Structure probing data (DMS and 2A3) for a 177-nucleotide construct. In probing experiments dimethyl sulfate is read out at A N1 and C N3, which are open when not base-paired. For DMS the reverse transcriptase was MarathonRT. Values cover nucleotides 27 to 126. The reactions ran in a buffer of 150 mM KOAc, 10 mM MgCl2 and 150 mM bicine (pH 8.5), at 24 C. 2A3 adducts were read by reverse transcription with SuperScript II with manganese. The 2A3 profile rests on 6,388 reads.
RNA sequence: GGGAACGACUCGAGUAGAGUCGAAAAGAUAUGGACAGUGGACAUGCUCCAGGCUCGGAAACGAGCCUGCGAGCAACAGCCACGUCCUAAGUCAAAACCGAGCUCAUAGUUCGCUAUGAGCUCGGAAGGUUAUUCAUCAGUUCGCUGAUGAAUAACCAAAAGAAACAACAACAACAAC
Reactivity to DMS in 0.01 (KOAc 150mM, MgCl2 10mM, bicine 150mM(pH8.5), 24C), signal-to-noise 2, nucleotides 027 to 126: g010a050u000a300u000g030g000a020c000a110g030u000g000g020a040c120a190u010g000c000u010c000c000a010g000g000c000u000c000g020g000a050a070a160c010g010a000g020c000c000u000g010c130g010a020g020c000a010a030c140a130g010c000c000a010c000g000u000c020c000u000a020a110g020u000c020a080a060a110a170c000c010g000a010g010c000u000c000a000u000a000g010u000u010c210g010c000u010a010u000g000a000g000c000u000c000g010g000a000a020
Reactivity to 2A3 in 0.01 (KOAc 150mM, MgCl2 10mM, bicine 150mM(pH8.5), 24C), signal-to-noise 2, nucleotides 027 to 126: g000a010u060a030u070g000g020a030c180a210g010u010g000g020a050c060a200u070g010c000u000c000c000a000g000g000c000u000c010g020g000a110a100a080c010g000a010g000c030c000u000g010c000g020a000g000c010a000a000c000a000g030c000c010a000c000g020u000c000c000u020a110a020g060u040c040a020a010a080a150c010c010g010a000g010c000u000c000a000u010a020g020u080u080c300g000c140u000a000u020g000a020g000c010u000c000g000g000a000a000